[RMDB]
Chemical mapping of a 207-nucleotide RNA with 2A3 and DMS. The reactions ran in a buffer of 150 mM KOAc, 10 mM MgCl2 and 150 mM bicine (pH 8.5), at 24 C. For 2A3 the reverse transcriptase was SuperScript II with manganese. The data come from the RNA Mapping Database (RMDB), library M2RFPK.
RNA sequence: GGGAACGACUCGAGUAGAGUCGAAAACCGUGACAUUGCGAAAGCAAGGCUGGCGGUAGGUAGUCCUGGGCGGCGACAGCCUUGGACCGCGGCGUAAAGGUGUACCUGGGGCCGUUAAACCUAUCGUGAAAGGCAACUUGGUUCGCCAAGUUGCCAACCUAUGGGCAUAGUUCGCUAUGCCCAUAGGAAAAGAAACAACAACAACAAC
Reactivity to 2A3 in 0.01 (KOAc 150mM, MgCl2 10mM, bicine 150mM(pH8.5), 24C), signal-to-noise 2, nucleotides 027 to 156: c090c000g040u040g140a080c140a200u070u050g020c010g020a090a050a000g000c010a010a000g070g030c070u080g070g000c010g000g000u020a000g000g000u020a010g010u030c000c010u010g000g000g010c050g050g020c110g040a050c090a040g000c020c000u010u030g010g010a010c020c020g010c000g010g000c000g040u070a000a050a040g030g010u150g090u270a220c000c000u030g000g000g110g000c000c000g000u040u160a070a100a020c000c000u000a010u010c020g010u040g040a100a050a000g000g000c010a000a000c000u020u010g000g000u070u060c120g080c120c000a000a000g000u000u000g000c000c000a010a010
Reactivity to DMS in 0.01 (KOAc 150mM, MgCl2 10mM, bicine 150mM(pH8.5), 24C), signal-to-noise 1, nucleotides 027 to 156: c060c010g000u020g030a060c040a090u000u000g040c010g010a150a120a250g010c040a020a050g050g070c010u000g060g020c010g020g020u040a010g010g000u000a070g010u000c000c000u020g010g010g020c000g060g020c070g000a140c170a300g000c000c000u000u000g000g000a050c000c090g060c020g010g010c020g030u040a150a150a030g020g040u010g000u000a110c000c010u000g020g000g010g040c000c010g020u010u000a030a100a040c000c020u010a000u010c010g000u000g000a060a060a110g100g010c000a020a020c000u010u000g010g010u000u010c300g000c010c010a010a020g040u010u010g030c000c000a020a000